RNA sequence: GGGAACGACUCGAGUAGAGUCGAAAAAAGUUGAUAUGGAUUUACUCCGAGGAGACGAACUACCACGAACAGGGAAAACUCUACCCGUGGCGUCUCCGUUUGACGAGUAAGUCCGAAGUCAACAAAAUCAUGUAUCAAUCUUCGGAUUGAUACAUGAAAAAGAAACAACAACAACAAC
Reactivity to DMS in 0.01 (KOAc 150mM, MgCl2 10mM, bicine 150mM(pH8.5), 24C), signal-to-noise 3, nucleotides 027 to 126: a120a070g020u000u000g000a010u000a200u010g010g000a020u000u000u010a000c020u000c000c000g020a070g010g000a010g000a010c010g000a060a050c140u010a300c010c010a020c020g020a020a280c140a050g020g000g000a140a070a120a100c040u000c010u000a170c100c110c010g010u010g020g000c000g000u000c000u000c000c000g000u000u010u000g010a070c300g000a020g000u000a010a000g010u000c000c000g010a060a120g000u000c020a000a000c010a050a070a080a060
Reactivity to 2A3 in 0.01 (KOAc 150mM, MgCl2 10mM, bicine 150mM(pH8.5), 24C), signal-to-noise 1, nucleotides 027 to 126: a000a010g020u030u010g000a040u050a030u280g000g000a000u010u000u000a000c000u000c010c000g020a030g010g000a000g020a000c010g000a080a050c070u130a040c140c000a000c020g040a050a020c030a060g000g000g050a000a110a280a270c030u030c010u030a050c040c000c000g000u010g000g000c000g000u010c000u000c000c000g000u030u030u030g010a010c000g000a000g000u000a000a010g000u000c000c000g000a080a000g000u010c000a000a000c000a000a030a020a050
The data come from the RNA Mapping Database (RMDB), library 15KREP. This 177-nucleotide RNA was probed chemically with DMS and 2A3. The RNA was probed in 150 mM KOAc, 10 mM MgCl2 and 150 mM bicine (pH 8.5) at 24 C. 2A3 adducts were read by reverse transcription with SuperScript II with manganese. For DMS, 1,902 sequencing reads were counted. For 2A3, 2,578 sequencing reads were counted. DMS (dimethyl sulfate) methylates the pairing face of unpaired adenines and cytosines.